Structure probing data (DMS and 2A3) for a 177-nucleotide construct.
RNA sequence: GGGAACGACUCGAGUAGAGUCGAAAAGAUAUGGAAUUGGAGACGAUUCGUUGUCGGAAACGACAAUACGAACACGACUCUCCCAAUUCCUAAGUCAAAGAUUAGGUCUCUUCGGAGACCUAAUCAAGUAGAUGGGAAGGUUCGCCUUCCCAUCUACAAAAGAAACAACAACAACAAC
Reactivity to DMS in 0.01 (KOAc 150mM, MgCl2 10mM, bicine 150mM(pH8.5), 24C), signal-to-noise 3, nucleotides 027 to 126: g000a040u000a300u000g000g000a000a000u000u000g020g000a050g030a080c030g000a300u000u000c010g010u000u000g000u000c000g000g000a090a050a230c000g020a000c010a020a060u000a100c010g030a000a030c160a140c190g020a170c300u010c050u000c140c010c150a020a010u000u000c000c000u010a060a090g000u000c040a130a130a240g000a010u000u010a000g000g000u000c000u000c000u000u020c270g030g000a020g000a000c000c000u020a000a000u000c010a030a070
Reactivity to 2A3 in 0.01 (KOAc 150mM, MgCl2 10mM, bicine 150mM(pH8.5), 24C), signal-to-noise 2, nucleotides 027 to 126: g010a020u060a000u140g030g010a000a010u040u000g010g000a030g030a030c170g180a200u020u050c020g010u000u020g030u000c020g000g010a050a050a000c000g010a010c010a030a050u260a140c020g020a020a020c300a050c300g300a230c060u000c000u000c030c050c020a000a030u010u000c000c000u010a090a030g020u030c010a300a000a080g020a000u000u000a010g000g010u000c000u000c000u070u090c300g030g000a030g000a000c000c000u000a010a000u000c000a000a000
The 2A3 profile rests on 3,380 reads. The RNA was probed in 150 mM KOAc, 10 mM MgCl2 and 150 mM bicine (pH 8.5) at 24 C. The data come from the RNA Mapping Database (RMDB), library TTRDES. DMS adducts were read by reverse transcription with MarathonRT.